[RMDB]
RNA sequence: GGGAACGACUCGAGUAGAGUCGAAAACAUCAUCCAGGAGGCGCGCGCAUCCGGUGAGGCCUCCACAGCAGAGGCCGCCGAUUGGGCGCUGGGCGUCAUUUCCAAGGCAGUCACCGCCCAGCAGUGAGCUGCAGGGCGAAUUCGUUCGCCCUGCAGCAAAAGAAACAACAACAACAAC
Reactivity to DMS in 0.01 (KOAc 150mM, MgCl2 10mM, bicine 150mM(pH8.5), 24C), signal-to-noise 1, nucleotides 027 to 126: c100a030u000c120a120u010c020c010a080g040g000a100g030g010c100g030c020g040c020g000c030a030u020c060c000g020g030u020g050a160g050g000c020c020u000c000c020a120c140a110g010c110a100g000a020g020g000c010c010g030c030c010g040a080u000u010g000g000g040c070g040c030u000g000g000g030c020g020u000c050a060u010u000u000c000c040a100a080g030g030c050a070g000u000c040a080c100c000g000c010c020c040a010g010c060a090g010u000g000a170

Chemical mapping of a 177-nucleotide RNA with DMS. The RNA was probed in 150 mM KOAc, 10 mM MgCl2 and 150 mM bicine (pH 8.5) at 24 C. For DMS the reverse transcriptase was MarathonRT.